[RMDB]
RNA sequence: GGGAACGACUCGAGUAGAGUCGAAAAUUUGCCGACGCCCGCACUGUCGUUUGCGGUGGUUCAUCACGGUGCGGGAGGCGGCGUCAUGAUCACCGCGUCGCACAACCCACCGCAGUACAGCGGCUACGCUAUAUGUAGAGUUCGCUCUACAUAUAGCAAAAGAAACAACAACAACAAC
Reactivity to 2A3 in 0.01 (KOAc 150mM, MgCl2 10mM, bicine 150mM(pH8.5), 24C), signal-to-noise 9, nucleotides 027 to 126: u030u020u130g020c010c000g020a050c060g050c030c010c000g020c010a010c020u050g020u120c050g090u090u160u120g010c010g020g030u040g020g030u120u140c040a070u100c030a080c070g050g000u010g000c000g000g030g000a030g100g000c000g000g000c010g020u060c030a130u210g110a150u090c010a010c040c020g000c010g030u020c010g000c010a030c020a050a070c010c000c000a010c000c010g000c000a000g030u070a030c030a030g020c010g030g000c010u050a040c100
Reactivity to DMS in 0.01 (KOAc 150mM, MgCl2 10mM, bicine 150mM(pH8.5), 24C), signal-to-noise 9, nucleotides 027 to 126: u000u010u000g010c010c000g030a120c130g010c010c010c000g020c080a300c020u000g010u000c170g010u000u010u010g020c030g010g020u010g000g000u010u010c140a090u010c150a060c090g010g010u000g010c010g010g010g010a050g010g010c010g010g010c020g010u000c140a090u010g000a100u010c050a090c030c030g010c050g010u000c040g010c040a060c110a110a130c120c010c010a080c020c000g020c010a060g000u010a040c120a080g000c020g010g010c070u000a060c180